Chemical mapping of a 177-nucleotide RNA with DMS and 2A3. For DMS, 23,090 sequencing reads were counted. 2A3 adducts were read by reverse transcription with SuperScript II with manganese. The data come from the RNA Mapping Database (RMDB), library OK1LIB.

RNA sequence: GGGAACGACUCGAGUAGAGUCGAAAAGAAUUGGUAUGUAAGCUACAGCUUCCGGUAGCUGCGUCACACUUUAAGAGUGUGCAUACUGAGCCGAAGCUCAGCUUCGGUCCCCCAAGGGAAGCGCAAAGAUUAAUUAUCAUUUCGAUGAUAAUUAAUCAAAAGAAACAACAACAACAAC
Reactivity to DMS in 0.01 (KOAc 150mM, MgCl2 10mM, bicine 150mM(pH8.5), 24C), signal-to-noise 7, nucleotides 027 to 126: g010a080a100u000u000g010g020u000a010u000g000u010a300a250g010c010u000a000c010a100g000c000u000u000c010c010g010g010u000a000g000c010u000g000c020g000u000c010a000c000a010c000u000u000u040a110a080g000a010g040u000g010u000g000c000a010u000a000c000u000g000a020g000c020c000g010a030a000g000c010u050c200a170g010c010u000u000c000g000g000u000c030c010c000c240c210a120a060g000g000g010a010a020g020c020g020c300a080a110a110
Reactivity to 2A3 in 0.01 (KOAc 150mM, MgCl2 10mM, bicine 150mM(pH8.5), 24C), signal-to-noise 9, nucleotides 027 to 126: g130a020a100u020u020g010g000u000a000u000g000u000a010a010g000c000u000a000c030a070g000c000u000u000c000c000g010g000u000a000g000c000u000g000c000g000u000c000a000c000a000c010u080u130u300a300a120g210a010g240u000g000u000g000c000a000u000a000c000u000g000a000g000c000c000g000a000a000g010c030u090c300a040g000c000u020u000c000g000g000u000c010c000c000c000c010a040a050g090g000g000a000a000g000c010g000c040a110a100a000